[RMDB]
RNA sequence: GGGAACGACUCGAGUAGAGUCGAAAAGACCUCCGUGUAGUCCAGCAGGCCGCUGUCCUUGAUCUCGUGGCGGGUGUACACCUCCAGGGGGACAAACUCGUGAUCCUCCAGCAUGGUGAUGUUGAGGUAGUUUGAUCUAGUUCGCUAGAUCAAACUAAAAAGAAACAACAACAACAAC
Reactivity to 2A3 in 0.01 (KOAc 150mM, MgCl2 10mM, bicine 150mM(pH8.5), 24C), signal-to-noise 2, nucleotides 027 to 126: g050a030c000c000u000c010c000g070u100g020u100a060g000u070c040c020a010g010c050a030g070g040c010c030g080c060u040g030u020c010c020u020u070g060a070u080c020u020c090g050u060g040g000c060g000g040g000u040g030u030a060c070a040c000c020u000c040c020a080g000g010g010g020g020a030c020a010a150a040c060u100c120g050u080g060a180u030c010c000u010c010c020a030g000c010a040u130g090g020u090g060a090u060g090u050u090g020a000g000g070
Reactivity to DMS in 0.01 (KOAc 150mM, MgCl2 10mM, bicine 150mM(pH8.5), 24C), signal-to-noise 4, nucleotides 027 to 126: g010a160c020c000u010c030c060g010u000g010u000a100g010u000c030c050a080g010c080a080g000g000c030c050g000c050u000g010u000c040c050u000u010g010a060u000c030u000c090g000u000g010g040c070g010g020g020u000g020u000a120c120a040c020c010u000c070c050a100g010g010g000g010g010a020c050a060a090a100c080u010c100g010u010g010a130u000c020c010u010c020c020a060g000c080a060u000g010g020u000g010a090u000g010u000u000g010a070g000g000
Record summary:
The data come from the RNA Mapping Database (RMDB), library OK2TST. An RNA of 177 nucleotides, treated with 2A3 and DMS and read out base by base. For DMS the reverse transcriptase was MarathonRT. For DMS, 4,324 sequencing reads were counted. The RNA was probed in 150 mM KOAc, 10 mM MgCl2 and 150 mM bicine (pH 8.5) at 24 C. The 2A3 profile rests on 2,114 reads.